[RMDB]
RNA sequence: GGGAACGACUCGAGUAGAGUCGAAAAACAGUCAGUACGCUGACUGAGGGAAACGGGAGCCGGGCUUGGGACAAGAGCCAUCCCAAGUCCAAGGCCAAGUAGGCUCUAGGGAUGGUACGCCAUCACAAAAACUGGUCUACCUUCGGGUAGACCAGAAGUGCAUCUAAACGUUCGCGUUUAGAUGCACAAAAGAAACAACAACAACAAC
Reactivity to 2A3 in 0.01 (KOAc 150mM, MgCl2 10mM, bicine 150mM(pH8.5), 24C), signal-to-noise 1, nucleotides 027 to 156: a000c020a000g000u030c000a010g040u070a050c180g040c130u010g020a000c000u010g020a100g030g030g020a080a070a130c160g030g000g040a080g020c040c020g000g000g000c020u030u040g050g000g000a020c070a130a010g000a000g030c010c000a010u000c000c000c000a000a000g000u020c010c010a030a030g000g000c020c030a030a030g060u120a090g080g000c000u000c000u030a040g030g000g020a030u020g010g020u030a050c210g100c020c000a000u030c010a000c060a060a060a050a020a020c000u000g000g000u000c000u000a000c000c040u010u060c220g060g000g000u000a000g000a020c000c000a000g000a000a020